[RMDB]
RNA sequence: GGGAACGACUCGAGUAGAGUCGAAAAUAGAACGUGGGUAUGGAAUAUGCACAAGGUUGUUCAAUUACUUAUGCGCUUUACGCAUACGUUGCUUUGCGUAUUUGGCAAAUACCAUGUGCUUUACAUCUGUAAUGAACGUCUUCGGACGUUCAUUACAAAAAGAAACAACAACAACAAC
Reactivity to 2A3 in 0.01 (KOAc 150mM, MgCl2 10mM, bicine 150mM(pH8.5), 24C), signal-to-noise 2, nucleotides 027 to 126: u210a000g060a070a000c060g010u030g030g020g000u070a020u040g030g060a060a050u070a060u150g020c010a010c030a050a030g000g010u050u050g060u270u190c050a070a030u100u080a060c020u060u040a010u040g000c050g070c060u050u100u150a060c060g000c010a000u000a040c060g150u080u060g040c000u000u050u060g030c000g020u030a000u030u020u020g110g040c020a040a040a000u080a020c000c000a010u010g000u000g030c000u030u040u000a050c010a090u100c050
Reactivity to DMS in 0.01 (KOAc 150mM, MgCl2 10mM, bicine 150mM(pH8.5), 24C), signal-to-noise 3, nucleotides 027 to 126: u010a060g000a050a060c070g010u000g000g020g010u000a080u000g000g010a080a070u000a030u000g000c030a030c130a060a080g000g010u000u010g000u000u000c200a060a090u010u010a030c060u000u000a040u000g000c040g010c170u010u010u010a060c050g010c010a010u000a030c110g010u000u010g020c080u000u000u000g000c030g020u000a020u000u000u010g010g030c090a040a080a080u020a050c010c010a060u000g010u000g000c020u000u000u010a070c160a090u000c100
An RNA of 177 nucleotides, treated with 2A3 and DMS and read out base by base.
As a SHAPE reagent, 2A3 marks flexible, mostly unpaired nucleotides at the ribose 2'-OH.
Values cover nucleotides 27 to 126.
For 2A3, 1,704 sequencing reads were counted.